An RNA of 177 nucleotides, treated with DMS and 2A3 and read out base by base. The reactions ran in a buffer of 150 mM KOAc, 10 mM MgCl2 and 150 mM bicine (pH 8.5), at 24 C. Values are in units of 0.01, from 0 to 300, in steps of 10. For 2A3 the reverse transcriptase was SuperScript II with manganese. Values cover nucleotides 27 to 126.
RNA sequence: GGGAACGACUCGAGUAGAGUCGAAAAUGGACGUGCUGUUCGCGGUCAUCGUGAUCGGCGUGUUGACCGGCCGGCUGCGCCGCAUUUUCGGCGAUGCCGACCUGGACAAGCUGCGGGAGUUGCGGGAAAACCAUGGUUAUUUCGAUAACCAUGGUUUAAAAGAAACAACAACAACAAC
Reactivity to DMS in 0.01 (KOAc 150mM, MgCl2 10mM, bicine 150mM(pH8.5), 24C), signal-to-noise 6, nucleotides 027 to 126: u030g010g010a070c090g010u010g020c030u000g000u000u000c030g010c020g020g020u020c180a110u040c050g010u000g010a050u010c040g000g000c030g010u010g000u010u000g020a110c040c030g010g010c030c000g010g010c010u000g000c020g000c000c000g030c300a110u010u010u020u010c020g000g000c000g000a140u020g000c010c000g000a030c030c010u020g030g000a080c060a050a080g010c030u010g010c070g000g010g000a200g000u010u010g010c050g010g000g000a110
Reactivity to 2A3 in 0.01 (KOAc 150mM, MgCl2 10mM, bicine 150mM(pH8.5), 24C), signal-to-noise 6, nucleotides 027 to 126: u120g050g010a020c040g030u050g030c040u030g020u100u060c020g000c010g020g040u210c080a130u220c060g040u050g050a120u040c030g040g000c020g010u040g060u040u070g040a050c000c000g000g000c000c000g000g030c030u150g020c030g000c010c010g030c090a170u080u050u100u210c010g000g000c000g030a020u060g000c010c000g000a010c010c020u050g010g010a020c010a050a010g030c050u080g010c030g050g000g000a090g060u120u120g020c020g010g020g000a010